This 177-nucleotide RNA was probed chemically with DMS and 2A3. For 2A3 the reverse transcriptase was SuperScript II with manganese.
RNA sequence: GGGAACGACUCGAGUAGAGUCGAAAAUGCACCUGUGGCUAUUUCCGCGUUGGCAGCACCACUGGCCGCACCGAAAAUAGGAAUCCGAACAGAAGAAGUCGGAUGGGGCUUCGAGAAGUCUAUUUUCGGCAUUUUACCUGUUCGCAGGUAAAAUGCCAAAAGAAACAACAACAACAAC
Reactivity to DMS in 0.01 (KOAc 150mM, MgCl2 10mM, bicine 150mM(pH8.5), 24C), signal-to-noise 1, nucleotides 027 to 126: u020g050c050a250c060c030u010g060u020g000g090c000u000a090u000u030u030c060c090g000c080g090u000u000g000g000c050a080g000c050a130c030c060a000c100u000g040g000c000c080g000c130a170c090c000g000a000a010a000a020u040a010g000g000a000a110u000c060c000g040a040a080c110a100g020a060a140g000a060a150g000u030c000g060g090a210u000g000g060g020g020c000u000u000c000g010a130g010a000a050g010u040c000u020a090u000u000u000u000c000
Reactivity to 2A3 in 0.01 (KOAc 150mM, MgCl2 10mM, bicine 150mM(pH8.5), 24C), signal-to-noise 2, nucleotides 027 to 126: u140g010c000a040c010c030u020g060u130g010g000c010u020a100u080u150u100c020c010g060c050g030u050u120g040g030c050a040g000c030a000c100c000a070c090u030g010g030c010c020g000c030a030c000c000g040a060a060a020a000u080a030g010g090a000a020u030c060c030g070a090a010c080a060g230a290a000g010a070a000g130u040c050g000g060a040u130g060g000g000g000c000u000u000c130g040a080g000a060a000g000u000c020u070a050u030u020u000u060c120

Conditions: 150 mM KOAc, 10 mM MgCl2 and 150 mM bicine (pH 8.5), 24 C.
The data come from the RNA Mapping Database (RMDB), library OK1LIB.
Values cover nucleotides 27 to 126.